[RMDB]
RNA sequence: GGGAACGACUCGAGUAGAGUCGAAAAAGAGUCCAGCCUCAUGCAGAGCACGCACUGCUUGGGCAGCUUGGCUGGCAGAAUCACCUGUGCAAUUCAUGCAUAUGCACACGUGUUCUCUGCACAGGUGUGUGCAACAAAAUGUAUGCGUGAACCACCACAGCUCGGUUUUAUUCGUAAAACCGAGCUGAAAAGAAACAACAACAACAAC
Reactivity to 2A3 in 0.01 (KOAc 150mM, MgCl2 10mM, bicine 150mM(pH8.5), 24C), signal-to-noise 2, nucleotides 027 to 156: a000g100a020g050u100c000c000a010g000c010c000u060c040a050u070g000c000a010g000a030g030c020a020c110g150c050a150c090u030g060c000u040u080g040g160g030c050a000g010c030u130u110g010g000c010u040g000g010c030a030g050a030a030u050c010a020c030c010u000g000u000g000c000a030a070u040u020c020a020u060g030c020a010u030a050u170g010c050a050c010a010c000g050u040g030u150u080c050u070c030u090g020c040a030c020a110g040g010u000g010u000g000u010g000c160a210a180c040a130a130a100a040u260g070u050a020u010g000c020g000u000g060a030a020c250c050a020c010c000a010